[RMDB]
RNA sequence: GGGAACGACUCGAGUAGAGUCGAAAAUGGCGUACGUUCGUGGGCCCAAACUAAUGUUUCAAUUAAUUCUUGCCAAUAACCACGCCAAGAAAUUAAGAACAUAAAACCAGUUGCCCAGAUUAAGUGAAUCCUCAUGGAUAUUCGUAUCCAUGAGGAUAAAAGAAACAACAACAACAAC
Reactivity to 2A3 in 0.01 (KOAc 150mM, MgCl2 10mM, bicine 150mM(pH8.5), 24C), signal-to-noise 3, nucleotides 027 to 126: u060g020g020c060g070u060a020c040g070u090u100c080g000u070g020g040g010c030c040c040a060a060a020c020u050a050a040u050g050u010u100u110c110a100a090u050u080a030a040u010u030c030u010u020g010c010c010a070a100u080a070a000c040c030a030c020g000c010c000a000a000g010a020a080a010u080u080a010a050g020a060a010c020a020u110a070a090a040a030c050c030a030g010u060u030g010c000c020c010a030g020a080u130u100a130a020g070u020g120a030
Reactivity to DMS in 0.01 (KOAc 150mM, MgCl2 10mM, bicine 150mM(pH8.5), 24C), signal-to-noise 6, nucleotides 027 to 126: u010g000g000c040g020u000a030c120g010u000u010c080g010u000g000g010g030c020c130c080a070a070a070c080u010a110a050u000g000u000u010u000c140a060a100u010u010a030a060u000u000c020u000u000g010c130c040a090a060u000a060a140c190c160a070c100g000c130c010a000a020g000a030a040a050u000u000a020a050g000a020a030c010a020u000a040a060a070a080c090c110a050g000u000u000g010c020c000c020a100g000a100u010u010a060a130g010u000g000a150
This 177-nucleotide RNA was probed chemically with 2A3 and DMS. For DMS, 5,756 sequencing reads were counted. The RNA was probed in 150 mM KOAc, 10 mM MgCl2 and 150 mM bicine (pH 8.5) at 24 C. In probing experiments dimethyl sulfate is read out at A N1 and C N3, which are open when not base-paired. For 2A3, 3,055 sequencing reads were counted.